The data come from the RNA Mapping Database (RMDB), library OK2TST.
This 177-nucleotide RNA was probed chemically with 2A3 and DMS.
The 2A3 profile rests on 1,887 reads.
The reactions ran in a buffer of 150 mM KOAc, 10 mM MgCl2 and 150 mM bicine (pH 8.5), at 24 C.
RNA sequence: GGGAACGACUCGAGUAGAGUCGAAAAUUGUGUAGUCGCGAGGAUCGGCGGCGGCUCGAUCCGGUCAUGCUGCGGCGGAUCGAGGCUCCACGUCAGUGGCUACAUACCCGUCGGCGGAUCGAAGCGACCUCGUCGGUCGAUUCGUCGACCGACGAGGAAAAGAAACAACAACAACAAC
Reactivity to 2A3 in 0.01 (KOAc 150mM, MgCl2 10mM, bicine 150mM(pH8.5), 24C), signal-to-noise 2, nucleotides 027 to 126: u130u040g000u010g010u010a020g000u030c020g000c010g060a140g140g030a190u180c040g030g010c100g000g010c030g040g060c020u010c000g000a000u000c000c030g100g100u150c040a040u170g150c100u130g030c090g020g000c010g000g000a000u010c000g000a010g030g050c020u000c000c010a030c020g020u040c040a000g010u000g000g000c000u030a060c000a000u030a000c000c000c000g010u030c040g050g030c020g010g010a040u070c040g020a070a000g050c020g030a060
Reactivity to DMS in 0.01 (KOAc 150mM, MgCl2 10mM, bicine 150mM(pH8.5), 24C), signal-to-noise 1, nucleotides 027 to 126: u010u000g020u000g020u000a020g010u010c010g010c030g000a230g040g000a080u000c020g020g010c060g010g010c090g000g020c000u030c010g000a010u000c010c000g000g000u000c050a110u020g020c160u010g000c130g020g000c020g000g000a000u000c010g000a040g020g000c050u000c010c000a040c030g020u000c100a150g000u000g010g020c060u010a010c010a040u000a060c070c000c000g010u000c000g010g010c030g010g000a050u000c030g000a060a110g010c010g000a080